[RMDB]
RNA sequence: GGGAACGACUCGAGUAGAGUCGAAAAGUGAUCUUCACCUGCCCGGUGGGGGUGAUCAAGAUGUUGCCCGGUUUGACGUCGCGGUGCACCAGGCCAGCGGCAUGCGCGAUCUGCAGAGCGCGGCCGGAAACAUUGUCUAUUUCGAUAGACAAUGUUUAAAAGAAACAACAACAACAAC
Reactivity to 2A3 in 0.01 (KOAc 150mM, MgCl2 10mM, bicine 150mM(pH8.5), 24C), signal-to-noise 9, nucleotides 027 to 126: g060u050g030a050u010c010u050u050c040a040c030c020u100g060c030c010c020g020g020u080g000g010g010g010g010u040g040a050u060c060a050a050g050a140u120g030u100u070g070c010c010c000g020g020u080u050u130g090a060c050g000u030c010g000c010g020g040u080g010c020a050c010c020a050g080g030c000c010a030g030c020g010g000c030a060u120g020c010g000c010g040a110u060c080u190g040c050a050g030a020g080c020g000c000g010g010c000c000g030g000
Reactivity to DMS in 0.01 (KOAc 150mM, MgCl2 10mM, bicine 150mM(pH8.5), 24C), signal-to-noise 9, nucleotides 027 to 126: g010u010g010a040u010c030u000u010c030a050c010c010u010g010c090c050c070g000g020u010g010g000g000g010g030u000g000a060u010c070a110a090g010a090u020g000u020u010g000c040c010c010g000g000u000u020u030g010a110c120g010u010c030g020c040g010g010u000g000c060a090c090c080a080g000g000c040c060a100g020c060g000g010c030a030u020g020c010g010c030g000a090u020c100u020g010c120a070g010a230g000c020g020c020g010g000c000c000g000g000